[RMDB]
This 207-nucleotide RNA was probed chemically with 2A3 and DMS.
RNA sequence: GGGAACGACUCGAGUAGAGUCGAAAAGACAAGAUUCACGAAACCCAAGGUGCAUGCCGAGGUGCGCUAGGCCUCGUUAACAAACCGCAAAAAAAUAGUCGCAAACGACGAAAACUACGCACUCGCAAAAAGCGGCACGUCUUCGGACGUGCCGCAACAUCAUAUACGUCUUCGGACGUAUAUGAUGAAAAGAAACAACAACAACAAC
Reactivity to 2A3 in 0.01 (KOAc 150mM, MgCl2 10mM, bicine 150mM(pH8.5), 24C), signal-to-noise 2, nucleotides 027 to 156: g090a030c070a030a040g010a160u060u060c070a030c130g070a050a050a090c040c000c020a000a040g110g010u090g040c050a090u080g110c110c000g030a010g000g070u040g020c110g000c040u040a030g000g060c010c000u010c000g030u030u080a060a060c110a110a130a040c070c080g090c100a080a080a000a000a000a000a190u160a040g030u030c040g060c120a080a160a000c040g000a000c010g030a030a000a050a000c010u030a000c000g020c050a010c010u180c080g090c020a000a060a060a040a060g010c040g020g150c010a020c010g010u000c010u060u060c070g070g000a020c020g000u000g120c000c010g000c000a010a000
Reactivity to DMS in 0.01 (KOAc 150mM, MgCl2 10mM, bicine 150mM(pH8.5), 24C), signal-to-noise 1, nucleotides 027 to 156: g000a300c190a110a150g040a120u000u000c010a170c020g040a090a090a130c000c040c000a060a300g030g060u000g010c120a080u000g000c040c150g070a040g030g050u000g010c110g000c070u000a070g040g010c010c040u010c070g030u000u020a080a150c040a050a050a100c080c020g040c110a000a000a020a150a150a080a210u000a120g000u000c000g030c060a140a050a160c040g030a050c010g000a070a110a040a240c020u010a000c010g050c000a070c010u000c020g010c010a070a010a070a050a070g000c040g000g070c000a000c000g030u000c000u000u000c300g040g000a000c000g060u040g050c000c010g020c010a000a000
Conditions: 150 mM KOAc, 10 mM MgCl2 and 150 mM bicine (pH 8.5), 24 C.
For DMS, 1,249 sequencing reads were counted.